[RMDB]
RNA sequence: GGGAACGACUCGAGUAGAGUCGAAAAAAGGGUCAGACAAUAAGUUUCCGUGGCUCGAUCAUAUUGGUGGAGGCUAUCGUGUAUCAGAAUUAGCAGAGGAUAAACAUGAAAUCCGUGCCACCUUACAAUAUGCGCUACAUGAAAGUGACAAACGAGGCUUCUCCUAAAUAUUCGUAUUUAGGAGAAGAAAAGAAACAACAACAACAAC
Reactivity to 2A3 in 0.01 (KOAc 150mM, MgCl2 10mM, bicine 150mM(pH8.5), 24C), signal-to-noise 4, nucleotides 027 to 156: a000a000g050g010g000u050c030a040g030a120c040a080a170u120a200a060g030u030u050u020c040c020g030u040g040g000c030u020c050g030a080u100c050a010u030a060u060u080g030g000u010g000g020a040g010g020c000u030a040u100c060g020u050g030u080a040u130c030a040g130a190a160u150u090a060g070c070a010g020a050g110g020a020u070a080a130a010c040a020u070g050a030a040a070u030c020c020g020u050g040c010c000a030c000c000u010u040a050c050a020a010u020a010u070g030c030g000c020u060a040c030a090u100g090a100a080a040g030u040g060a030c040a040a090a000c060g010a040g060g000
Reactivity to DMS in 0.01 (KOAc 150mM, MgCl2 10mM, bicine 150mM(pH8.5), 24C), signal-to-noise 3, nucleotides 027 to 156: a060a060g010g030g050u010c040a100g010a120c060a100a120u010a050a160g000u000u000u000c030c030g010u010g010g030c030u020c020g020a170u010c030a080u000a080u010u000g010g000u000g020g010a090g010g010c060u000a080u010c070g040u000g020u000a120u010c060a120g010a080a160u000u010a080g030c050a100g000a100g010g020a050u000a050a110a130c070a100u000g000a070a040a100u000c030c030g010u000g010c010c020a040c030c020u010u000a050c040a020a050u000a020u010g010c030g010c050u000a020c040a080u010g000a080a060a150g010u010g020a110c030a030a050a140c040g010a120g000g000

Chemical mapping of a 207-nucleotide RNA with 2A3 and DMS.
Source: RMDB library OK3TST, as collected in RNAgym.
For 2A3, 3,802 sequencing reads were counted.
Conditions: 150 mM KOAc, 10 mM MgCl2 and 150 mM bicine (pH 8.5), 24 C.
DMS adducts were read by reverse transcription with MarathonRT.